[RMDB]
RNA sequence: GGGAACGACUCGAGUAGAGUCGAAAACGAUGGGGCCGGGAGGGCCAAGCGUAUCAUCGAUCUGUCGGUCGGUAUGGUAAGUGACGCAAGCUGUAUGGUAAGUGACGCAAGCUGAAAGAAGAGCGCUAGAUGAUAUAUUCUUCGGAAUAUAUCAUCUAAAAGAAACAACAACAACAAC
Reactivity to DMS in 0.01 (KOAc 150mM, MgCl2 10mM, bicine 150mM(pH8.5), 24C), signal-to-noise 6, nucleotides 027 to 126: c090g010a120u010g010g020g020g010c030c040g020g030g020a110g010g000g010c040c040a070a100g010c050g020u020a060u010c060a040u000c030g010a060u010c030u010g010u010c110g010g020u000c040g010g010u000a050u000g010g020u010a040a120g000u000g000a120c090g000c070a070a120g000c030u000g020u010a050u010g010g000u010a050a130g010u010g010a070c070g000c050a040a110g000c030u010g000a060a070a120g000a070a080g010a070g000c050g020c140u000
Reactivity to 2A3 in 0.01 (KOAc 150mM, MgCl2 10mM, bicine 150mM(pH8.5), 24C), signal-to-noise 4, nucleotides 027 to 126: c030g050a080u100g000g000g040g060c050c040g040g070g080a120g070g020g000c010c010a020a020g020c010g020u040a060u120c020a010u040c010g020a020u010c020u120g220u150c050g000g020u000c020g020g010u070a050u060g040g010u060a080a050g030u020g060a020c030g010c050a030a020g000c010u040g050u200a060u070g120g010u080a080a070g020u020g050a020c040g000c040a010a040g040c020u030g070a110a060a030g070a050a000g020a010g030c030g000c030u020